This 207-nucleotide RNA was probed chemically with 2A3. Reactivities are rounded to 0.1 and cut off at 0 and 3. Conditions: 150 mM KOAc, 10 mM MgCl2 and 150 mM bicine (pH 8.5), 24 C.
RNA sequence: GGGAACGACUCGAGUAGAGUCGAAAAGAAAAGACAAUGUCGAUAAGUAUAAGGACGUACCAAACCGGUAUCGUGCCGGAGAUGUGGUGUCUAUAGAUGGAGAGAGUACAAAAGUCUAUGUAAACGGGAUGCCGGCAAAAGGAGAUGAGAUUAAUGGAGCCGUACCACUGUUCGCAGUGGUACGGCUAAAAGAAACAACAACAACAAC
Reactivity to 2A3 in 0.01 (KOAc 150mM, MgCl2 10mM, bicine 150mM(pH8.5), 24C), signal-to-noise 2, nucleotides 027 to 156: g010a010a070a000a000g010a000c030a110a080u120g000u030c010g060a000u160a190a000g140u090a020u050a240a000g040g020a000c000g000u010a030c050c040a090a080a030c060c090g030g040u040a040u240c120g040u080g210c030c060g000g000a060g000a000u170g050u110g070g000u020g000u000c030u010a060u030a000g040a040u020g010g000a010g000a000g000a000g010u070a040c030a040a200a010a000g010u050c040u080a040u040g070u110a180a090a060c040g000g000g100a040u080g160c000c000g060g020c100a130a140a000a000g080g000a040g010a010u070g030a060g040a020u000u160a110a000u080g080g010